[RMDB]
This 207-nucleotide RNA was probed chemically with 2A3 and DMS.
The DMS profile rests on 2,761 reads.
The reactions ran in a buffer of 150 mM KOAc, 10 mM MgCl2 and 150 mM bicine (pH 8.5), at 24 C.
For 2A3, 1,378 sequencing reads were counted.

RNA sequence: GGGAACGACUCGAGUAGAGUCGAAAAUGGCUUCUCCUGGGCGAUCGCUCGCUGUUUUUGUGGCUGGCUUUCAGCGCGCUGGAGGAGCCGGGAGCGGAGGCGGAGGACCGAGCCAAAAACGUCAGCCUAUAGAGGAAGCUGUUCGCAGCUUCCUCAAAUAACGCAGUACAUUCGUGUACUGCGUUAUAAAAGAAACAACAACAACAAC
Reactivity to 2A3 in 0.01 (KOAc 150mM, MgCl2 10mM, bicine 150mM(pH8.5), 24C), signal-to-noise 2, nucleotides 027 to 156: u130g000g010c000u010u000c000u020c030c010u050g030g060g040c060g090a100u130c100g010c080u010c040g010c020u020g070u040u100u050u060u160g160u110g030g000c020u000g000g000c030u040u070u030c020a010g020c030g000c000g000c040u020g020g000a000g000g000a000g000c000c000g010g030g000a020g010c030g010g070a060g010g090c110g010g040a050g030g040a030c020c060g020a020g040c050c040a050a040a060a000a000c050g020u020c000a010g000c010c010u080a090u110a160g010a000g000g010a000a000g000c000u020g040u050u090c200g000c070a000g000c000u000u010c000c010u000c000a010a000
Reactivity to DMS in 0.01 (KOAc 150mM, MgCl2 10mM, bicine 150mM(pH8.5), 24C), signal-to-noise 1, nucleotides 027 to 156: u010g020g020c000u020u000c000u000c000c000u010g000g030g060c040g020a070u010c100g000c020u020c270g020c000u000g000u000u000u000u000u000g020u000g020g030c000u010g030g020c000u000u000u000c050a130g030c000g050c020g040c040u000g010g000a050g000g020a060g010c010c000g000g010g010a050g010c100g000g000a100g030g000c060g040g010a140g000g000a080c050c030g020a100g010c030c050a080a030a060a070a080c070g000u000c000a080g020c000c000u000a150u000a110g000a030g020g020a030a020g050c000u010g020u000u000c250g010c000a020g000c020u000u000c000c000u000c000a000a020